This 170-nucleotide RNA was probed chemically with 2A3 and DMS. The data come from the RNA Mapping Database (RMDB), library 15KLIB. For 2A3 the reverse transcriptase was SuperScript II with manganese.
RNA sequence: GGGAACGACUCGAGUAGAGUCGAAAACUAGCUGCCGGGUGUUCCAUCCAUGGGAUCGGUGCCGAGUGAGGCUUAUCCCGGGGGUGACGCCUCGGUCCUCCCUUAGCAUCGGAGACCCGGGCCCCCUAUCGUCUUGAGUUCGCUCAAGACAAAAGAAACAACAACAACAAC
Reactivity to 2A3 in 0.01 (KOAc 150mM, MgCl2 10mM, bicine 150mM(pH8.5), 24C), signal-to-noise 9, nucleotides 027 to 129: c030u040a040g060c030u060g060c020c000g020g010g010u030g050u070u030c030c020a060u060c050c050a190u220g030g000g000a030u050c020g000g010u020g010c000c010g010a010g000u030g010a000g010g020c090u130u160a130u230c010c010c010g000g000g000g000g000u090g050a050c070g100c030c000u010c000g000g010u030c000c000u000c020c010c000u000u010a010g000c000a010u020c030g060g020a060g070a110c000c000c000g010g000g000c000c000c000c000c000u050a110u180c090
Reactivity to DMS in 0.01 (KOAc 150mM, MgCl2 10mM, bicine 150mM(pH8.5), 24C), signal-to-noise 9, nucleotides 027 to 129: c030u030a090g010c030u030g020c000c000g000g010g020u000g000u020u020c080c000a080u040c030c110a120u080g010g010g010a250u030c040g000g000u000g000c000c010g020a020g000u040g000a010g000g000c300u040u020a080u040c180c000c030g000g000g010g000g030u040g010a110c300g010c000c000u000c040g000g030u030c000c000u020c030c060c020u000u000a090g000c000a000u000c040g000g020a120g040a110c000c020c030g020g010g010c000c050c000c000c000u040a090u070c130